[RMDB]
RNA sequence: GGGAACGACUCGAGUAGAGUCGAAAAGGGACGCCUUUAGAAGAAGAGGCUAGGUGGUAUUCCGGUGUGGGAUACUUGGUAAUAUGUAACGCUAAUUGCAUAAGAUUGUAGCACGGAAUUUACAGUCAAAACGGUCCUGCGUUCGCGCAGGACCGAACUGUAGUACCUCCUUCGGGAGGUACUACAGAAAAGAAACAACAACAACAAC
Reactivity to 2A3 in 0.01 (KOAc 150mM, MgCl2 10mM, bicine 150mM(pH8.5), 24C), signal-to-noise 1, nucleotides 027 to 156: g000g000g030a060c030g040c000c020u140u060u050a170g050a140a010g010a080a030g030a080g050g020c020u060a040g000g010u010g000g000u030a060u090u000c060c030g030g030u110g010u110g040g040g010a030u040a130c000u030u080g080g000u070a090a070u070a110u180g000u050a030a030c080g020c180u070a030a060u130u080g010c000a010u010a090a030g000a010u010u060g040u040a030g040c060a010c080g020g000a000a030u060u170u130a040c000a000g010u000c030a050a030a110a000c010g020g000u010c000c000u000g000c010g000u010u080c150g000c000g000c010a000g000g000a000c000c000g000a000a000
Background:
Chemical mapping of a 207-nucleotide RNA with 2A3. 2A3 adducts were read by reverse transcription with SuperScript II with manganese. The reactions ran in a buffer of 150 mM KOAc, 10 mM MgCl2 and 150 mM bicine (pH 8.5), at 24 C. For 2A3, 699 sequencing reads were counted.